Annotation: Structure probing data (DMS) for a 177-nucleotide construct. Values are in units of 0.01, from 0 to 300, in steps of 10.
RNA sequence: GGGAACGACUCGAGUAGAGUCGAAAACGCGCUCCAGUUCGAGGCCGAUGCGCGCCGCCUCCAGCGCCUGCUCCGCCAGUUCCGCCUGCUGCGCCAGACGGCGGGCGGUCUGGUUCGCCAGGUAGCAUAAUAGGGACCAGUUCGCUGGUCCCUAUUAAAAAGAAACAACAACAACAAC
Reactivity to DMS in 0.01 (KOAc 150mM, MgCl2 10mM, bicine 150mM(pH8.5), 24C), signal-to-noise 2, nucleotides 027 to 126: c060g000c040g000c010u010c080c070a140g020u000u000c120g000a150g020g000c090c040g000a080u010g020c050g000c030g030c050c070g010c060c020u000c070c090a100g020c010g000c050c010u010g010c060u000c100c150g000c010c010a020g010u010u020c000c000g010c010c000u000g010c000u010g010c070g020c120c110a070g010a090c020g020g010c000g000g000g010c020g000g000u000c000u000g000g000u000u000c110g030c300c010a000g010g000u000a080g030c020a150